[RMDB]
Annotation: Source: RMDB library OK2TRN, as collected in RNAgym. An RNA of 177 nucleotides, treated with DMS and 2A3 and read out base by base. For 2A3 the reverse transcriptase was SuperScript II with manganese. For DMS, 11,574 sequencing reads were counted. High DMS reactivity at an A or C suggests that its Watson-Crick edge is free. 2A3 is a SHAPE reagent: it acylates the 2'-hydroxyl of flexible nucleotides of all four kinds.
RNA sequence: GGGAACGACUCGAGUAGAGUCGAAAAAAUUUCUAACACAGAUCCUCAAUCAGGUACACACGGAAUAAGUGAUAGAAUUGGAAUGGCUAAUGCUUUAGUGCCUUAUCAACAAGUGCCUACCUACCUAGAUAUGCAAAAUAUUCGUAUUUUGCAUAUCAAAAGAAACAACAACAACAAC
Reactivity to DMS in 0.01 (KOAc 150mM, MgCl2 10mM, bicine 150mM(pH8.5), 24C), signal-to-noise 9, nucleotides 027 to 126: a060a070u000u010u000c020u000a050a080c080a050c100a070g000a140u000c030c020u000c130a110a100u000c130a040g010g010u000a060c140a090c090a080c160g010g000a070a050u010a130a120g020u010g000a080u000a030g010a040a070u000u000g010g000a080a060u010g010g010c030u000a060a060u000g010c050u000u010u000a070g010u000g010c030c040u000u000a100u000c100a050a070c130a040a050g010u000g010c010c040u000a130c040c030u000a070c080c050u000a100
Reactivity to 2A3 in 0.01 (KOAc 150mM, MgCl2 10mM, bicine 150mM(pH8.5), 24C), signal-to-noise 8, nucleotides 027 to 126: a010a000u100u070u010c040u040a130a030c020a000c000a030g060a090u030c010c000u040c040a060a130u090c030a040g040g090u110a040c090a000c010a020c100g020g050a090a070u190a230a020g010u010g040a040u030a050g060a040a030u060u060g060g040a100a050u070g030g000c040u090a120a070u150g030c030u110u070u090a100g050u090g050c010c000u040u050a130u110c040a010a070c020a050a050g020u020g090c000c000u010a030c010c000u040a050c000c010u000a030